[RMDB]
This 177-nucleotide RNA was probed chemically with DMS. Values cover nucleotides 27 to 126.
RNA sequence: GGGAACGACUCGAGUAGAGUCGAAAACACAUGCCAUCAUAUCGGUUAAGAACUCUUAACUCUGAUGGCUUUCGAGUUAUGUGGUGCAUUGAAGCUCUCCCUUCAAUUCAACGUAGCGUUCCGUCAAAACAGCUCGACGUUUCGACGUCGAGCUGUUAAAAGAAACAACAACAACAAC
Reactivity to DMS in 0.01 (KOAc 150mM, MgCl2 10mM, bicine 150mM(pH8.5), 24C), signal-to-noise 1, nucleotides 027 to 126: c070a150c170a040u000g080c000c000a020u010c010a020u000a070u000c290g000g010u000u000a000a000g010a300a110c300u000c000u000u010a010a000c000u000c070u000g000a030u000g020g010c000u000u000u000c070g010a070g000u000u020a030u020g010u000g000g030u000g020c080a110u000u000g000a020a000g010c140u010c130u000c180c080c000u000u000c030a010a070u000u000c020a140a040c020g000u000a030g010c020g000u000u000c000c010g010u010c070a030a020

Conditions: 150 mM KOAc, 10 mM MgCl2 and 150 mM bicine (pH 8.5), 24 C. It was measured as part of the RMDB library M2PK90.